This 170-nucleotide RNA was probed chemically with DMS and 2A3. The RNA was probed in 150 mM KOAc, 10 mM MgCl2 and 150 mM bicine (pH 8.5) at 24 C. The data come from the RNA Mapping Database (RMDB), library 15KLIB.
[RMDB]
RNA sequence: GGGAACGACUCGAGUAGAGUCGAAAACCAUAGCGAUAGGGAGAGAUGCUAGGAGUUAGAGGAGACCGAAGCGAGGAGGAAAGCAAAGAAAGCAACGGGGCUAGCCGUCAGGUGUUCCACCCCCCGAGACCACAUACCUUCGGGUAUGUGAAAAGAAACAACAACAACAAC
Reactivity to DMS in 0.01 (KOAc 150mM, MgCl2 10mM, bicine 150mM(pH8.5), 24C), signal-to-noise 9, nucleotides 027 to 129: c000c000a110u020a040g030c020g000a040u000a000g000g000g000a040g030a010g020a060u020g040c080u030a040g030g020a050g030u000u000a070g000a020g030g030a170g020a040c020c000g000a110a060g010c150g000a060g000g000a000g050g000a040a030a050g020c220a040a070a070g030a040a050a070g000c060a080a090c120g020g010g020g050c110u020a100g040c030c030g030u020c110a050g030g020u010g000u010u010c020c000a110c040c030c000c010c010c010g000a130g010a140c180
Reactivity to 2A3 in 0.01 (KOAc 150mM, MgCl2 10mM, bicine 150mM(pH8.5), 24C), signal-to-noise 7, nucleotides 027 to 129: c010c000a040u080a010g100c040g040a060u090a080g010g010g010a010g000a000g010a030u090g030c030u040a040g010g040a040g020u090u060a030g020a030g040g000a020g000a010c020c020g030a030a010g060c060g010a030g010g000a010g000g010a060a020a010g040c080a040a030a060g060a050a070a010g020c030a020a060c080g020g000g030g020c040u050a030g020c000c010g020u060c040a050g000g040u050g020u070u030c020c010a040c000c000c000c010c000c000g020a030g050a040c050